[RMDB]
RNA sequence: GGGAACGACUCGAGUAGAGUCGAAAAGCCAAAACAACGCGCCGUCGCGAAGCAAGUGGCAACGCACAGCGGCGAGCAAACGGUAGAGAAAGCGAGCGAAAUCUCAAGCGUUGCGUACGGCAAGAGGAAAUAAAUAAAUAUUCGUAUUUAUUUAUUUAAAAGAAACAACAACAACAAC
Reactivity to DMS in 0.01 (KOAc 150mM, MgCl2 10mM, bicine 150mM(pH8.5), 24C), signal-to-noise 7, nucleotides 027 to 126: g010c010c010a090a130a230a100c060a020a050c030g010c050g020c020c010g020u010c030g020c000g000a130a190g020c030a120a130g010u020g010g010c100a100a120c130g000c020a050c120a270g010c010g010g000c020g010a140g010c040a070a090a080c100g010g010u020a100g000a050g010a070a080a110g010c070g000a090g000c050g000a050a090a080u010c000u000c020a110a130g000c010g000u000u000g000c030g000u020a120c180g000g010c030a110a120g000a120g010g010
Reactivity to 2A3 in 0.01 (KOAc 150mM, MgCl2 10mM, bicine 150mM(pH8.5), 24C), signal-to-noise 8, nucleotides 027 to 126: g030c010c000a020a060a030a040c060a010a020c010g020c000g010c020c010g020u030c000g000c010g060a060a020g040c040a150a070g090u100g240g030c070a060a030c050g010c020a040c010a050g010c000g020g000c010g030a020g010c000a020a070a020c050g070g050u180a020g010a000g030a110a100a010g100c090g030a030g020c040g060a060a090a100u030c030u010c030a060a030g010c010g020u010u020g010c010g030u060a030c060g010g030c040a040a030g080a030g080g100